[RMDB]
RNA sequence: GGGAACGACUCGAGUAGAGUCGAAAAUUAGGCGGCGCACCAGCAUGGGAACGCUCCAGUGCAGCAGCCCCUGCAUGAUCAUCGCGCCGGCGUAAGCACCCACCGACGACGACGCCAAGCCGGACGCCACUGGCCUCACUUUCGAGUGAGGCCAGUGAAAAGAAACAACAACAACAAC
Reactivity to DMS in 0.01 (KOAc 150mM, MgCl2 10mM, bicine 150mM(pH8.5), 24C), signal-to-noise 1, nucleotides 027 to 126: u000u010a080g010g000c020g010g000c010g020c060a070c210c010a110g060c040a010u070g000g020g000a080a190c230g030c020u000c000c140a110g020u000g030c120a080g040c110a120g020c210c000c010c060u000g010c020a070u000g020a150u010c110a090u000c130g000c030g010c020c000g060g040c010g050u000a070a070g000c100a100c010c000c020a080c090c010g000a030c100g000a110c020g000a030c090g040c000c050a060a140g000c020c020g010g000a170c160g020c050
Chemical mapping of a 177-nucleotide RNA with DMS.
The reactions ran in a buffer of 150 mM KOAc, 10 mM MgCl2 and 150 mM bicine (pH 8.5), at 24 C.
It was measured as part of the RMDB library OK2TRN.
For DMS, 548 sequencing reads were counted.
Values are in units of 0.01, from 0 to 300, in steps of 10.